[RMDB]
RNA sequence: GGGAACGACUCGAGUAGAGUCGAAAAUGCGUGUGCACCUGCCCUGCCCCUCCUCUGUCCACUGCCAGGUCCCCGGGAUCAAGCAGCCUCUGGAGGGAGGGGUGUCCAGGCCUGGCUCUGGGAGCAGCCCUCGCCUCGUGUACUGCUUUCACCGCAACAUUAAUGCGGAGUUCGCUCCGCAUUAAUGAAAAGAAACAACAACAACAAC
Reactivity to 2A3 in 0.01 (KOAc 150mM, MgCl2 10mM, bicine 150mM(pH8.5), 24C), signal-to-noise 1, nucleotides 027 to 156: u120g000c060g040u100g050u050g030c020a040c040c040u030g070c010c000c030u080g040c020c000c020c000u030c000c050u100c020u060g130u050c020c030a020c050u030g000c050c010a060g000g050u050c010c000c080c010g160g000g000a020u010c010a050a060g000c010a000g010c010c030u190c060u060g000g000a010g010g000g010a000g030g000g010g010u000g020u030c000c010a000g000g040c030c060u110g040g000c020u040c040u100g020g000g010a040g010c000a040g010c020c020c000u020c010g060c000c000u060c060g030u030g010u040a050c020u010g050c000u050u050u000c180a240c080c020g000c030a000a170

An RNA of 207 nucleotides, treated with 2A3 and read out base by base. Conditions: 150 mM KOAc, 10 mM MgCl2 and 150 mM bicine (pH 8.5), 24 C. For 2A3, 774 sequencing reads were counted. It was measured as part of the RMDB library OK3TST.